An RNA of 177 nucleotides, treated with DMS and 2A3 and read out base by base.
RNA sequence: GGGAACGACUCGAGUAGAGUCGAAAAGGAGUGCUACCGAAAGGUAGCACUCCAACAAAUCGGUGUAAUUGCAGCCCGUUUUACACCGUGCGGCACAGCGGAAACGCUGAUGUCGUAUAAAGGGCUACACUGCGUAAAUGUUCGCAUUUACGCAGUGAAAAGAAACAACAACAACAAC
Reactivity to DMS in 0.01 (KOAc 150mM, MgCl2 10mM, bicine 150mM(pH8.5), 24C), signal-to-noise 2, nucleotides 027 to 126: g010g020a030g050u010g000c000u000a010c010c000g000a130a130a140g020g000u000a000g020c000a010c010u000c000c000a030a050c050a030a090a050u010c010g010g000u000g000u000a010a030u010u000g000c030a040g010c010c000c000g010u000u000u000u000a000c010a010c010c000g010u000g010c010g000g000c010a020c000a010g000c020g010g000a120a050a210c000g020c000u000g000a030u000g030u000c000g010u000a040u010a070a160a120g020g010g000c000u010a250
Reactivity to 2A3 in 0.01 (KOAc 150mM, MgCl2 10mM, bicine 150mM(pH8.5), 24C), signal-to-noise 1, nucleotides 027 to 126: g000g000a020g000u000g000c000u010a000c020c000g040a100a130a120g040g000u000a000g010c000a010c010u000c010c000a010a010c000a000a000a000u160c000g000g000u010g000u000a020a020u070u110g110c100a020g000c000c000c000g020u090u020u030u000a000c010a010c050c010g020u020g000c010g000g030c000a000c000a000g020c020g010g020a070a040a000c010g000c000u000g000a050u000g020u000c020g000u000a000u000a010a070a000g020g030g000c010u020a030
The 2A3 profile rests on 2,797 reads. Source: RMDB library OK2TRN, as collected in RNAgym.